Chemical mapping of a 177-nucleotide RNA with DMS and 2A3. The data come from the RNA Mapping Database (RMDB), library TTRDES. For DMS, 1,904 sequencing reads were counted.

RNA sequence: GGGAACGACUCGAGUAGAGUCGAAAAGAUAUGGAUCAGAGGUGGGAGCUCCCACUCGGAAACGAGUGUGAGAGCAUCGAUCACCCUGAUCCUAAGUCAAAGUACGAGGUGUUCGCACCUCGUACAACUUAUGGUGUUCCUUCGGGAACACCAUAAGAAAAGAAACAACAACAACAAC
Reactivity to DMS in 0.01 (KOAc 150mM, MgCl2 10mM, bicine 150mM(pH8.5), 24C), signal-to-noise 1, nucleotides 027 to 126: g020a010u000a030u010g000g000a010u000c000a000g000a200g000g010u000g000g010g000a060g020c000u040c000c000c000a010c000u000c000g000g000a010a010a030c010g010a020g020u000g010u000g000a180g060a030g020c020a260u000c280g000a060u010c000a000c000c000c000u000g000a010u000c000c020u010a000a040g000u000c020a100a110a140g030u000a010c000g020a010g020g040u000g010u000u000c260g020c000a010c010c000u000c000g000u010a000c010a090a110
Reactivity to 2A3 in 0.01 (KOAc 150mM, MgCl2 10mM, bicine 150mM(pH8.5), 24C), signal-to-noise 2, nucleotides 027 to 126: g010a010u010a020u070g000g000a020u000c010a010g120a150g120g000u010g000g010g030a050g010c000u000c000c020c010a000c010u000c000g010g020a020a010a000c000g000a000g010u000g000u120g070a300g020a010g080c010a020u300c050g030a010u040c010a000c020c000c000u020g000a000u000c000c000u000a000a000g030u000c030a160a090a110g020u000a010c000g010a000g010g030u010g050u080u130c300g030c160a000c000c010u000c000g000u010a000c000a000a010